[RMDB]
RNA sequence: GGGAACGACUCGAGUAGAGUCGAAAAGCAGGGAGUGCACUCUAGAGGACAAGGCUGUGGAAACCCUACACAGAGUAGAGUGCCCGAGUCUUGAGUGUAUGCGGGAACAGGAAAGCUGUGCUAUAAGUGACACUCGAGGUCCAUCUGAAGAAGUGUAGCAUACGAGUACUUUCGAGUACUCGUAUGCAAAAGAAACAACAACAACAAC
Reactivity to 2A3 in 0.01 (KOAc 150mM, MgCl2 10mM, bicine 150mM(pH8.5), 24C), signal-to-noise 1, nucleotides 027 to 156: g090c020a010g000g000g050a080g000u070g030c000a030c010u080c000u000a110g020a090g230g000a080c060a030a120g010g000c000u000g000u040g020g020a010a110a120c060c000c000u020a020c070a010c000a040g080a000g050u040a030g000a010g010u010g030c000c000c000g020a010g030u000c000u010u030g000a020g010u040g000u040a220u090g010c000g000g030g010a050a020c000a020g050g190a140a150a040g150c030u030g000u000g000c000u080a040u050a300a060g000u030g050a000c000a000c010u000c010g030a000g020g010u000c030c000a140u090c100u080g060a120a050g070a030a010g060u060g000u210a050
Source information
An RNA of 207 nucleotides, treated with 2A3 and read out base by base. The RNA was probed in 150 mM KOAc, 10 mM MgCl2 and 150 mM bicine (pH 8.5) at 24 C. The 2A3 profile rests on 631 reads.